Chemical mapping of a 207-nucleotide RNA with 2A3 and DMS.

[RMDB]
RNA sequence: GGGAACGACUCGAGUAGAGUCGAAAAGGGCAGUACAACAUGAGCGGCGCCUCGCCGGUGUACAGCCCCUGCUUCAAGUUCUUCACGCCGGCGGAGGUGUCGGCCAAGGACCGCUGCAUGAGCCGGCUGAUUGCGGAGGUGGGCGCGGGCGUGUCGCUCUUACAUGGGAUUUCGAUCCCAUGUAAGAAAAAGAAACAACAACAACAAC
Reactivity to 2A3 in 0.01 (KOAc 150mM, MgCl2 10mM, bicine 150mM(pH8.5), 24C), signal-to-noise 2, nucleotides 027 to 156: g030g030g030c020a020g040u120a100c020a130a010c050a160u130g050a050g050c010g010g000c010g010c010c000u000c000g000c000c000g040g030u060g010u050a060c040a040g020c000c010c000c010u080g040c000u070u060c090a140a030g040u070u040c010u040u040c070a000c090g000c010c000g010g010c020g070g050a020g060g030u000g020u020c030g020g000c000c000a030a030g030g020a050c010c040g030c070u050g010c030a060u050g000a010g040c020c000g040g020c000u030g040a130u060u110g020c000g030g020a020g010g010u080g050g030g000c070g010c050g010g000g010c040g010u050g030u050c040g010c030
Reactivity to DMS in 0.01 (KOAc 150mM, MgCl2 10mM, bicine 150mM(pH8.5), 24C), signal-to-noise 2, nucleotides 027 to 156: g040g020g130c020a140g030u010a180c050a100a110c050a130u020g010a050g020c000g030g010c010g010c020c010u000c030g000c010c020g010g020u000g040u000a090c060a130g020c030c010c020c000u020g040c020u040u010c100a060a150g010u000u000c030u010u020c050a050c050g030c000c010g030g010c010g050g010a090g050g000u000g010u000c000g030g030c010c020a060a160g000g010a070c000c030g040c060u010g020c080a130u010g050a260g010c000c040g030g000c020u000g000a110u000u000g010c000g000g000a090g020g020u010g010g020g100c060g030c040g010g000g000c050g020u000g000u000c010g000c060
For DMS, 5,182 sequencing reads were counted.